[RMDB]
RNA sequence: GGGAACGACUCGAGUAGAGUCGAAAACGAGGCCAACCGCAAGGCCAUGCUGGCGGCAAUCGACGUGGUGGCGGAAGCCUCGCGCAUUGCCAUUGACGGCGGCGGCGAGAAAGCGCGCGACCGCCAACCAUGGACUGAGGUUCGCCUCAGUCCAUGGAAAAGAAACAACAACAACAAC
Reactivity to 2A3 in 0.01 (KOAc 150mM, MgCl2 10mM, bicine 150mM(pH8.5), 24C), signal-to-noise 3, nucleotides 027 to 126: c040g020a050g020g040c040c030a050a070c110c030g010c100a060a100g170g000c020c010a020u080g020c030u060g050g090c020g040g010c010a020a040u110c050g250a180c030g060u060g000g060u060g050g020c020g030g030a050a010g020c000c000u000c000g000c010g000c020a040u040u080g030c000c030a050u040u150g190a130c140g010g000c000g000g000c010g020g000c020g030a060g170a050a120a040g190c020g000c010g020c010g110a250c000c000g010c000c020a000a040
Reactivity to DMS in 0.01 (KOAc 150mM, MgCl2 10mM, bicine 150mM(pH8.5), 24C), signal-to-noise 2, nucleotides 027 to 126: c090g000a050g010g000c020c080a070a100c020c010g080c120a230a120g000g000c040c020a040u000g040c050u020g010g000c180g050g030c130a080a050u020c030g010a180c040g030u010g000g030u010g010g020c000g000g030a230a140g000c000c000u010c010g010c040g040c030a070u000u020g030c000c020a160u010u010g020a090c120g000g010c010g030g000c020g010g010c020g010a120g000a050a130a130g010c060g000c000g000c020g000a070c010c010g010c000c000a040a110

Conditions: 150 mM KOAc, 10 mM MgCl2 and 150 mM bicine (pH 8.5), 24 C. Structure probing data (2A3 and DMS) for a 177-nucleotide construct. For 2A3, 2,949 sequencing reads were counted. For 2A3 the reverse transcriptase was SuperScript II with manganese. For DMS, 1,432 sequencing reads were counted. Values are in units of 0.01, from 0 to 300, in steps of 10. For DMS the reverse transcriptase was MarathonRT.